[RMDB]
Structure probing data (DMS) for a 177-nucleotide construct.
Values cover nucleotides 27 to 126.
The reactions ran in a buffer of 150 mM KOAc, 10 mM MgCl2 and 150 mM bicine (pH 8.5), at 24 C.
RNA sequence: GGGAACGACUCGAGUAGAGUCGAAAAUUGGUUCGAAAACAACAGGAUAUCACAUAUUGAAGGCUAACACAGUACAACAGCUAUGUCGAUUUGGCGAUGUCGAUUUGGAGAGUGAAAUGAACAUGUAUAUCUGUGGAAGCUUCGGCUUCCACAGAUAAAAAGAAACAACAACAACAAC
Reactivity to DMS in 0.01 (KOAc 150mM, MgCl2 10mM, bicine 150mM(pH8.5), 24C), signal-to-noise 1, nucleotides 027 to 126: u000u000g030g000u000u000c090g060a070a170a050a120c080a080a150c100a090g000g030a070u000a030u010c020a010c070a050u000a140u000u000g000a120a110g000g000c030u020a030a120c100a030c100a090g020u000a030c070a030a130c270a110g010c000u020a030u000g000u020c020g020a100u010u000u020g010g030c060g010a040u010g100u000c020g000a070u020u000u010g010g000a060g040a130g020u000g010a090a060a090u000g000a030a030c170a150u000g010u000a090